Description: The record gives the reactivity of an RNA of 177 nucleotides to 2A3 and DMS. The reactions ran in a buffer of 150 mM KOAc, 10 mM MgCl2 and 150 mM bicine (pH 8.5), at 24 C. The DMS profile rests on 1,960 reads. DMS adducts were read by reverse transcription with MarathonRT.

RNA sequence: GGGAACGACUCGAGUAGAGUCGAAAAAGAAAGAGCGUAUUCGCGACUUGACGUGAAUGAGCCUAGACUGUAGGCUCUAGUGGGAUAGUAACGCUCACUCCCAAAACGCUAUUCCACAGUCAGUUAACCUGUGCUAUUCAUUCGUGAAUAGCACAGGAAAAGAAACAACAACAACAAC
Reactivity to 2A3 in 0.01 (KOAc 150mM, MgCl2 10mM, bicine 150mM(pH8.5), 24C), signal-to-noise 3, nucleotides 027 to 126: a020g160a020a070a010g030a000g000c000g000u050a070u050u070c030g020c020g070a040c080u130u170g040a040c030g020u060g080a060a070u090g000a010g000c000c000u080a130g110a300c150u190g130u240a000g010g010c000u000c010u010a030g000u000g000g000g000a000u000a000g040u010a040a040c010g000c000u020c010a060c030u040c010c000c030a000a000a000a040c040g000c000u010a000u010u030c010c000a000c010a010g070u070c020a020g020u050u100a040a050
Reactivity to DMS in 0.01 (KOAc 150mM, MgCl2 10mM, bicine 150mM(pH8.5), 24C), signal-to-noise 2, nucleotides 027 to 126: a090g000a160a080a070g000a010g010c000g000u040a110u000u020c060g020c100g000a100c130u010u000g030a050c070g070u010g040a040a030u010g000a010g010c000c000u000a050g040a120c140u000g000u010a010g010g000c000u000c030u000a030g010u000g000g000g010a000u000a020g000u000a120a080c030g000c010u010c000a110c110u000c000c010c010a060a030a050a040c210g000c000u000a010u000u000c000c000a010c010a160g010u000c020a030g000u000u000a130a200